[RMDB]
RNA sequence: GGGAACGACUCGAGUAGAGUCGAAAAUACCUCGCCGCGAUCCGGGCCGUGGACCCGCGGAUCGUUGAGGACGAAGAGAAGGCGAUCGAUUCCGGUCGGAACCAGUGCGCCUCGCUGCGCCGGGGCGGUGGCAAGGCGGAUUGGGCCGCUGCCCAGCCCUACCUGCGCUGUUCGCAGCGCAGGUAGGAAAAGAAACAACAACAACAAC
Reactivity to 2A3 in 0.01 (KOAc 150mM, MgCl2 10mM, bicine 150mM(pH8.5), 24C), signal-to-noise 2, nucleotides 027 to 156: u100a010c000c010u010c000g120c060c050g000c020g020a030u030c000c000g000g020g000c020c030g190u120g130g080a270c060c010c000g080c070g010g010a000u000c000g030u050u120g060a060g050g050a060c130g030a060a070g080a020g020a140a010g020g000c010g020a030u110c010g090a120u110u060c050c050g050g010u100c030g070g030a050a080c010c000a020g030u090g180c000g030c000c000u040c030g060c090u200g010c010g060c050c010g000g000g010g010c040g010g020u010g000g000c090a050a060g020g000c020g030g050a070u070u140g000g050g000c010c010g000c030u020g010c000c000c000a010g050c000

Structure probing data (2A3) for a 207-nucleotide construct. Reactivities are rounded to 0.1 and cut off at 0 and 3. It was measured as part of the RMDB library OK3TST. Conditions: 150 mM KOAc, 10 mM MgCl2 and 150 mM bicine (pH 8.5), 24 C.